[RMDB]
RNA sequence: GGGAACGACUCGAGUAGAGUCGAAAAGCAACUUAGGAUUUUAGGCUCCCCGUGCGUGUCUCGAACCAUGCCGGGCCAAACCCACGGGGGCUGGCGGUCCCCGUGAGGUCAAAAUCAAACCGCUGGAAAAACAGUUCUAGCUUCGGCUAGAACUGAAUCACUGUCAGAAGUUCGCUUCUGACAGUGAAAAAGAAACAACAACAACAAC
Reactivity to 2A3 in 0.01 (KOAc 150mM, MgCl2 10mM, bicine 150mM(pH8.5), 24C), signal-to-noise 1, nucleotides 027 to 156: g000c000a010a060c100u130u180a220g030g100a190u170u190u070u090a040g010g030c000u080c020c040c030c020g060u120g000c010g000u050g050u020c030u060c230g090a050a020c020c000a000u030g000c000c000g000g010g010c010c030a070a120a010c000c010c010a000c000g010g000g000g000g000c000u010g010g000c000g010g000u000c000c000c020c000g060u000g000a120g010g030u060c010a010a000a060a120u070c000a050a190a030c010c000g020c020u040g030g000a150a090a000a040a000c000a000g000u000u000c000u000a000g000c000u070u050c270g060g000c000u020a020g010a010a000c000u000g000a000a000